[RMDB]
RNA sequence: GGGAACGACUCGAGUAGAGUCGAAAAGCUCUGUAAUGGGAUGGGAUCCGAAGCCCCAUUGAGGGAUAAUACAGGCUCUCCCAUCCAACUCCUAUUCCAACACGUCCUCGUCGUAGAGAGUGGUAACUAAGGUAUAGCUCCUUCGGGAGCUAUACAAUCCAAACUGAUAGUUCGCUAUCAGUUUGGAAAAAGAAACAACAACAACAAC
Reactivity to 2A3 in 0.01 (KOAc 150mM, MgCl2 10mM, bicine 150mM(pH8.5), 24C), signal-to-noise 1, nucleotides 027 to 156: g000c000u050c070u030g070u130a090a140u110g050g020g070a000u000g000g000g040a030u190c010c050g010a110a070g000c050c000c000c000a170u040u220g030a280g020g020g000a000u150a230a030u110a110c150a010g010g000c000u010c000u000c020c030c030a000u000c000c000a000a000c000u000c000c000u030a090u110u060c030c000a090a020c010a040c070g120u020c000c000u000c030g070u040c050g010u100a040g000a000g000a000g040u040g030g050u040a050a040c030u030a210a000g130g000u000a000u000a000g000c000u000c000c000u000u000c060g160g000g000a020g000c000u000a000u000a000c000a000a010
Reactivity to DMS in 0.01 (KOAc 150mM, MgCl2 10mM, bicine 150mM(pH8.5), 24C), signal-to-noise 1, nucleotides 027 to 156: g030c010u000c060u000g020u000a050a120u000g010g000g000a030u000g000g010g030a090u020c010c010g020a210a280g030c020c000c010c000a300u000u010g010a160g010g050g010a120u000a060a090u010a180c100a180g000g010c030u000c150u000c000c010c010a090u000c030c010a070a040c040u000c030c040u010a060u030u000c020c040a070a030c080a090c020g020u000c020c000u000c030g040u000c090g090u010a110g000a150g000a090g010u010g000g000u000a050a120c060u020a100a130g010g010u030a010u000a010g000c010u000c000c010u000u010c300g060g000g000a100g010c000u000a000u000a010c000a120a050